Structure probing data (DMS) for a 177-nucleotide construct. Source: RMDB library TTRINS, as collected in RNAgym. DMS adducts were read by reverse transcription with MarathonRT. The reactions ran in a buffer of 150 mM KOAc, 10 mM MgCl2 and 150 mM bicine (pH 8.5), at 24 C.
RNA sequence: GGGAACGACUCGAGUAGAGUCGAAAAGAUAUGGAAUCCUUGAAGCUACUUACAUCGUCUCGAGACCGGUGUCGGAAACGACACGGGUCGAUGAGAGACGAUGUAAGUAGUGGAGAUUCCUAAGUCACUAAGGUGCAUGGUUCGCCAUGCACCUUAGAAAAGAAACAACAACAACAAC
Reactivity to DMS in 0.01 (KOAc 150mM, MgCl2 10mM, bicine 150mM(pH8.5), 24C), signal-to-noise 2, nucleotides 027 to 126: g020a050u020a300u010g000g000a010a010u000c010c300u000u010g000a170a210g020c000u020a020c000u010u020a000c000a000u000c000g010u000c000u010c000g000a140g010a000c000c000g020g060u000g030u000c020g040g000a160a100a230c000g010a010c010a020c010g020g020g010u010c010g030a130u020g030a290g000a000g010a020c000g010a000u000g000u000a000a010g020u000a000g000u010g000g020a040g000a000u000u000c000c000u000a100a140g010u020c010a300